[RMDB]
RNA sequence: GGGAACGACUCGAGUAGAGUCGAAAAAACGCUGGGCGUUGUAAGUGCUAAGACAGGGCAUUGUCAGUUACCUGAAGCGCGCACGGGUAACUUGGAUUUAUGCCUCGAGCAUUGAGACGCCUGUGCUGAAGCGCGCACGGCAACCGAAAGGUGCGAACUCUUUAUAGCCCUUCGGGGCUAUAAAGAGAAAAGAAACAACAACAACAAC
Reactivity to 2A3 in 0.01 (KOAc 150mM, MgCl2 10mM, bicine 150mM(pH8.5), 24C), signal-to-noise 1, nucleotides 027 to 156: a010a000c040g020c010u010g010g000g030c000g020u050u000g040u030a110a020g010u000g020c010u160a220a040g050a050c060a070g020g030g020c000a030u070u080g030u040c110a050g000u030u000a000c000c000u010g050a190a010g010c020g000c000g050c000a030c060g020g000g020u020a000a000c000u060u150g180g020a030u130u260u100a000u070g010c000c000u020c020g030a020g000c000a000u030u090g020a060g000a030c000g010c030c010u000g000u000g010c020u090g000a020a010g000c010g000c020g000c000a000c000g040g000c060a010a040c010c000g010a130a020a010g030g010u050g010c050g020a080a090
The data come from the RNA Mapping Database (RMDB), library RNAMAK. Structure probing data (2A3) for a 207-nucleotide construct. The reactions ran in a buffer of 150 mM KOAc, 10 mM MgCl2 and 150 mM bicine (pH 8.5), at 24 C.